RNA sequence: GGGAACGACUCGAGUAGAGUCGAAAAAGCAUCAUUGAGACUUGCCUCAGUUUACAUAUGGGCAUACGGGGAUACUGAUCAAAAUUGGGAACAAAUCCAUACCAUUGUCAAAGCUCGCUGUAACAUCCAGGCAUUUGCAAUUCGUUGCAAAUGCCUGAAAAGAAACAACAACAACAAC
Reactivity to 2A3 in 0.01 (KOAc 150mM, MgCl2 10mM, bicine 150mM(pH8.5), 24C), signal-to-noise 1, nucleotides 027 to 126: a020g000c010a040u050c000a030u060u110g040a100g000a070c040u050u050g030c020c000u080c020a030g040u060u110u050a070c060a020u200a040u050g030g000g000c040a030u040a040c050g050g010g000g010a010u020a130c080u070g030a070u070c040a000a120a030a100u080u040g050g020g040a040a050c040a030a130a050u070c020c010a020u040a050c050c020a060u010u070g000u050c030a060a070a010g020c010u020c020g000c010u000g000u050a050a000c000a020u020c010
Reactivity to DMS in 0.01 (KOAc 150mM, MgCl2 10mM, bicine 150mM(pH8.5), 24C), signal-to-noise 1, nucleotides 027 to 126: a080g010c050a090u000c020a150u000u010g010a140g000a140c060u000u000g050c010c030u000c090a040g030u000u000u010a090c120a090u010a070u000g010g000g030c010a060u010a080c080g010g020g010g000a050u000a010c160u000g000a040u010c100a040a020a070a120u020u000g030g000g000a060a080c230a020a020a040u000c030c020a030u010a160c040c010a030u030u000g000u000c040a020a090a080g020c080u000c020g000c070u000g000u000a070a060c110a070u000c080
Notes: The data come from the RNA Mapping Database (RMDB), library OK2TST. An RNA of 177 nucleotides, treated with 2A3 and DMS and read out base by base. DMS adducts were read by reverse transcription with MarathonRT. The RNA was probed in 150 mM KOAc, 10 mM MgCl2 and 150 mM bicine (pH 8.5) at 24 C.